RNA sequence: GGGAACGACUCGAGUAGAGUCGAAAAAAAAAAACGCUGGGUCACGUGAGCUUUCUACAUUUCAACAGCAGCUGAAGCGCGCACGGCUGACAUGAAAUGUUCUAAGCUCAGUGACCUGUGCUGAAGCGCGCACGGCAACCGAAAGGUGCGAAAAAAAGAAUGUCAAGGAGUUCGCUCCUUGACAUUCAAAAGAAACAACAACAACAAC
Reactivity to 2A3 in 0.01 (KOAc 150mM, MgCl2 10mM, bicine 150mM(pH8.5), 24C), signal-to-noise 1, nucleotides 027 to 156: a000a000a020a000a000a040a020c010g000c010u000g000g030g000u010c000a050c010g060u040g010a000g020c000u030u000u000c020u060a010c010a020u000u000u000c210a300a160c090a120g150c010a000g000c020u020g000a200a000g060c010g000c020g040c020a000c020g020g000c010u020g060a080c020a150u300g000a000a000a000u010g000u040u000c050u120a020a000g010c000u000c000a010g000u000g000a000c010c000u000g000u000g020c000u020g060a130a050g020c020g010c000g000c000a020c030g000g000c000a010a020c000c000g070a100a000a020g060g020u060g000c030g150a070a080a000a000a040a000a000
An RNA of 207 nucleotides, treated with 2A3 and read out base by base. For 2A3 the reverse transcriptase was SuperScript II with manganese. The data come from the RNA Mapping Database (RMDB), library RNAMAK. Conditions: 150 mM KOAc, 10 mM MgCl2 and 150 mM bicine (pH 8.5), 24 C.